Structure probing data (2A3 and DMS) for a 177-nucleotide construct.
Conditions: 150 mM KOAc, 10 mM MgCl2 and 150 mM bicine (pH 8.5), 24 C.
For 2A3 the reverse transcriptase was SuperScript II with manganese.
For 2A3, 15,399 sequencing reads were counted.
[RMDB]
RNA sequence: GGGAACGACUCGAGUAGAGUCGAAAAGAUAUGGAGCAUGCAACAGCGUGCCCAUCGGAAACGAUGGCACGACAUGCAUGGCUCCUAAGUCAAAAGGGAAUUAUCAACUUCGGUUGAUAAUUCCCAACUUAGAAAGUAUGUUCGCAUACUUUCUAAGAAAAGAAACAACAACAACAAC
Reactivity to 2A3 in 0.01 (KOAc 150mM, MgCl2 10mM, bicine 150mM(pH8.5), 24C), signal-to-noise 3, nucleotides 027 to 126: g020a010u040a010u090g000g000a000g010c010a010u010g010c020a060a090c090a300g160c020g000u000g020c110c020c000a000u000c000g020g010a020a030a020c000g000a010u010g010g010c010a000c000g210a150c020a010u010g000c000a000u010g050g010c000u000c000c000u000a010a000g040u020c030a010a020a080a150g000g000g000a000a010u000u000a000u010c000a010a000c010u070u120c280g030g000u000u000g000a000u000a000a000u000u000c000c000c000a000a000
Reactivity to DMS in 0.01 (KOAc 150mM, MgCl2 10mM, bicine 150mM(pH8.5), 24C), signal-to-noise 8, nucleotides 027 to 126: g010a020u000a240u000g000g000a020g010c000a020u000g000c000a030a130c290a150g010c020g010u000g000c160c020c030a000u000c000g010g000a060a050a100c000g010a010u000g000g000c000a000c000g000a090c110a130u000g000c010a000u000g010g010c000u000c000c000u000a000a050g000u000c020a060a070a130a140g010g000g000a020a000u000u000a000u000c000a000a010c000u000u010c200g030g010u000u000g000a010u000a000a010u000u000c000c000c000a000a010